[RMDB]
Conditions: 150 mM KOAc, 10 mM MgCl2 and 150 mM bicine (pH 8.5), 24 C. An RNA of 177 nucleotides, treated with DMS and read out base by base. The data come from the RNA Mapping Database (RMDB), library TTRINS.

RNA sequence: GGGAACGACUCGAGUAGAGUCGAAAAGAUAUGGAUCCGAACUACGCUGCAUGGACAGCGAAGAACACACUUGCUCGGAAACGAGCAAGUGUGGGAGCUGUUCUGUGAUGGCGCGGAUCCUAAGUCACAUGAGUGUGUAGUUCGCUACACACUCAUGAAAAGAAACAACAACAACAAC
Reactivity to DMS in 0.01 (KOAc 150mM, MgCl2 10mM, bicine 150mM(pH8.5), 24C), signal-to-noise 1, nucleotides 027 to 126: g000a020u030a300u010g000g000a000u000c000c030g010a110a130c070u020a300c030g040c030u020g020c030a030u030g000g000a010c020a010g000c000g000a090a130g030a120a240c010a010c010a000c010u000u000g010c000u000c000g000g000a060a090a110c010g020a010g030c000a000a000g030u000g020u000g000g000g000a080g010c000u020g000u020u000c010u000g030u000g020a100u000g030g000c040g020c010g000g000a020u000c010c000u000a000a040g020u000c040a260